The record gives the reactivity of an RNA of 177 nucleotides to 2A3 and DMS.
Reactivities are given for positions 27 through 126.
The DMS profile rests on 12,215 reads.
The data come from the RNA Mapping Database (RMDB), library OK2TRN.
For 2A3 the reverse transcriptase was SuperScript II with manganese.
RNA sequence: GGGAACGACUCGAGUAGAGUCGAAAAAUGAUAAGAUUGGGGAUGCCUUCAUUUCUAUAGGCCACUGCUGUAACAUAGAAGGGUUUGAAAGCAUCUAUGAGGAUGUCACAGCACUCAGGAAGGUUAAUCAGGUAUACCUAUUCGUAGGUAUACCUGAAAAAGAAACAACAACAACAAC
Reactivity to 2A3 in 0.01 (KOAc 150mM, MgCl2 10mM, bicine 150mM(pH8.5), 24C), signal-to-noise 5, nucleotides 027 to 126: a000u070g040a020u040a090a060g060a100u060u130g020g010g010g010a020u040g020c010c000u020u030c030a070u040u120u000c040u070a120u100a100g060g000c000c030a100c070u090g000c020u030g030u090a090a010c020a040u070a030g070a080a040g150g060g000u040u100u120g100a070a040a000g000c010a010u000c020u060a170u180g050a050g100g000a020u040g020u050c010a020c010a060g010c030a020c020u030c020a010g050g060a040a010g020g040u110u150a040a070
Reactivity to DMS in 0.01 (KOAc 150mM, MgCl2 10mM, bicine 150mM(pH8.5), 24C), signal-to-noise 8, nucleotides 027 to 126: a080u010g010a130u000a060a070g010a120u000u010g000g010g010g010a090u010g010c010c020u000u010c040a090u000u000u000c050u010a090u010a090g000g010c050c110a080c160u000g010c030u000g000u000a090a070c080a040u010a040g000a080a090g000g010g010u000u010u010g010a080a080a120g010c050a020u000c010u000a080u010g010a130g000g000a060u000g010u000c050a080c050a060g010c040a040c080u000c060a100g010g010a050a040g000g010u000u010a060a150